[RMDB]
RNA sequence: GGGAACGACUCGAGUAGAGUCGAAAAAUUAACAGCCCAUGCGCACAAUGAUUUUGUACAACCGCUUAAGCCGUAUUUAAGACAGGAUCCUGAAAAUGGACACAUCGCAGAUCGAAUUAUUGCAAUGCCCUCCCCUGUCCUUCGGGACAGGGGAGGGAAAAGAAACAACAACAACAAC
Reactivity to 2A3 in 0.01 (KOAc 150mM, MgCl2 10mM, bicine 150mM(pH8.5), 24C), signal-to-noise 1, nucleotides 027 to 126: a050u300u300a070a070c030a100g010c000c000c000a110u180g000c030g000c000a030c070a160a030u020g210a210u000u120u250u300g240u160a020c000a000a000c000c020g000c160u030u030a000a000g040c060c000g030u030a000u000u160u000a210a000g000a000c110a000g000g000a120u000c000c000u030g000a120a000a060a090u110g040g030a000c080a080c000a000u110c000g000c000a000g000a080u080c000g020a100a100u300u000a050u190u000g000c000a000a110u050g000